[RMDB]
RNA sequence: GGGAACGACUCGAGUAGAGUCGAAAACUUCUUAGGGUUCUUGCAAGUAACGGUACGACUAUCAUGAACGAAGUUGGUGGCGGUGGAUUCCUGAAGAACUCUACCUAUCGCGCUCGACCGCACCAUGAAUUUUACGAUCUCAUGGUAGCUCCGAACAGUUUAUUUUACAUUUCGAUGUAAAAUAAACAAAAGAAACAACAACAACAAC
Reactivity to 2A3 in 0.01 (KOAc 150mM, MgCl2 10mM, bicine 150mM(pH8.5), 24C), signal-to-noise 7, nucleotides 027 to 156: c020u070u070c020u080u130a030g030g020g010u030u010c030u040u090g110c100a160a090g050u090a170a060c030g020g060u110a050c080g100a110c070u010a010u050c010a020u030g020a110a040c060g020a070a030g080u070u060g030g010u040g100g060c030g000g020u030g050g040a100u120u100c030c040u090g040a050a010g000a020a020c010u030c020u050a080c010c020u150a160u250c080g000c020g000c120u050c050g090a040c020c010g000c020a000c010c000a010u070g090a120a130u160u170u170u210a070c050g010a070u010c010u000c060a000u000g000g000u000a010g000c030u000c010c000g030a060a030c000a010
Reactivity to DMS in 0.01 (KOAc 150mM, MgCl2 10mM, bicine 150mM(pH8.5), 24C), signal-to-noise 3, nucleotides 027 to 156: c030u010u000c030u000u000a060g010g010g010u000u010c020u000u000g020c080a080a130g010u000a090a120c070g000g000u000a140c020g020a100c010u000a030u000c030a020u000g010a050a110c060g010a100a120g010u000u000g030g010u000g010g020c040g040g000u000g020g010a160u000u000c000c020u000g010a090a140g020a040a040c060u000c020u000a060c050c020u000a100u000c080g000c080g000c040u000c070g010a090c010c050g000c020a080c000c010a020u000g000a050a070u000u000u000u000a190c140g010a120u010c080u010c000a000u010g010g020u000a050g020c010u000c050c010g020a070a090c070a150
Chemical mapping of a 207-nucleotide RNA with 2A3 and DMS. Values cover nucleotides 27 to 156. For 2A3, 5,006 sequencing reads were counted.